The record gives the reactivity of an RNA of 207 nucleotides to DMS.
RNA sequence: GGGAACGACUCGAGUAGAGUCGAAAAGCGUGGAUAUCUUCGGAUAUCCACGCAAACCGUAGGAGCGUGUACACGAGCUAAUGGUUCGAAAGAGCCAUGUAGCGAUGAGUGUAUACGCUCCUAAACGGAAACCAGAUUUAGAUUCGUCUAAAUCUGGACCAAUUGAAAGCUUCGGCUUUCAAUUGGUAAAAGAAACAACAACAACAAC
Reactivity to DMS in 0.01 (KOAc 150mM, MgCl2 10mM, bicine 150mM(pH8.5), 24C), signal-to-noise 1, nucleotides 027 to 156: g020c000g090u000g000g010a000u000a000u000c010u000u000c300g080g010a040u000a020u020c010c000a030c000g000c000a000a010a010c000c000g000u000a050g050g020a010g040c000g030u000g060u010a000c010a020c000g000a120g020c000u000a060a020u000g020g050u000u010c010g000a180a180a240g000a010g000c000c000a000u010g050u000a030g050c010g030a140u010g010a300g020u000g040u000a020u000a010c000g000c000u010c000c000u010a000a020a040c040g030g000a100a100a190c000c000a000g010a050u000u000u000a010g000a020u010u010c300g040u010c000u010a000a010a000u000c000u010g010g000